The record gives the reactivity of an RNA of 177 nucleotides to DMS and 2A3. For 2A3 the reverse transcriptase was SuperScript II with manganese. It was measured as part of the RMDB library TTRDES. For 2A3, 7,598 sequencing reads were counted. The RNA was probed in 150 mM KOAc, 10 mM MgCl2 and 150 mM bicine (pH 8.5) at 24 C.
[RMDB]
RNA sequence: GGGAACGACUCGAGUAGAGUCGAAAAGAUAUGGACAUUGGUCGUCGAUAAGAAUCAUAUCGGAAACGAUAUAUUCUUUUGACGACGCUACAAUGUCCUAAGUCAAACUGUCGACUUCGGUCGACAGCACGUUAUUCUCCUUCGGGAGAAUAACGUGAAAAGAAACAACAACAACAAC
Reactivity to DMS in 0.01 (KOAc 150mM, MgCl2 10mM, bicine 150mM(pH8.5), 24C), signal-to-noise 4, nucleotides 027 to 126: g000a040u000a300u020g000g000a020c010a000u010u010g010g000u000c000g020u000c010g000a020u010a020a010g030a010a000u000c260a010u000a010u000c010g000g000a120a070a300c010g010a000u000a010u000a030u000u000c000u010u000u010u000g000a020c010g000a020c000g000c220u010a300c020a010a010u000g000u000c000c010u000a000a100g000u000c040a070a100a300c010u010g000u000c000g000a020c000u000u000c250g040g000u000c000g000a000c000a010g010
Reactivity to 2A3 in 0.01 (KOAc 150mM, MgCl2 10mM, bicine 150mM(pH8.5), 24C), signal-to-noise 3, nucleotides 027 to 126: g060a020u090a030u190g000g000a000c010a020u000u000g060g020u000c000g010u000c030g040a050u100a300a000g020a020a010u120c200a000u130a010u020c000g000g020a070a070a060c010g000a000u000a000u000a000u010u010c000u030u030u030u030g000a010c000g000a000c010g020c010u150a080c020a000a000u000g010u000c000c000u020a150a000g040u010c040a080a050a130c000u000g020u020c010g000a020c010u070u100c300g140g000u010c000g000a010c010a000g030